Structure probing data (DMS) for a 177-nucleotide construct. Reactivities are rounded to 0.1 and cut off at 0 and 3. Values cover nucleotides 27 to 126.

RNA sequence: GGGAACGACUCGAGUAGAGUCGAAAAGAGCCAUUUUCACAUCAGAAAGCUGUUGAAUUAAGCAAGGCUGACCACAUCGUUUUCAUAUGCGGACAUUAUGAAGGUUACGAUGAACGUAUCCGAACACUGUCAGGAAGGAUUUCGAUCCUUCCUGACAAAAAGAAACAACAACAACAAC
Reactivity to DMS in 0.01 (KOAc 150mM, MgCl2 10mM, bicine 150mM(pH8.5), 24C), signal-to-noise 2, nucleotides 027 to 126: g010a050g020c030c060a210u000u000u000u010c000a040c070a140u000c040a060g010a080a030a270g010c190u000g010u000u000g040a160a070u000u010a100a120g000c110a040a190g000g000c000u000g000a140c060c110a250c110a010u000c000g010u000u000u000u000c000a000u000a040u000g010c110g010g010a060c080a020u010u000a030u020g000a040a090g020g000u010u000a010c020g010a050u000g000a180a120c210g040u060a010u010c020c040g000a050a040c280a030c140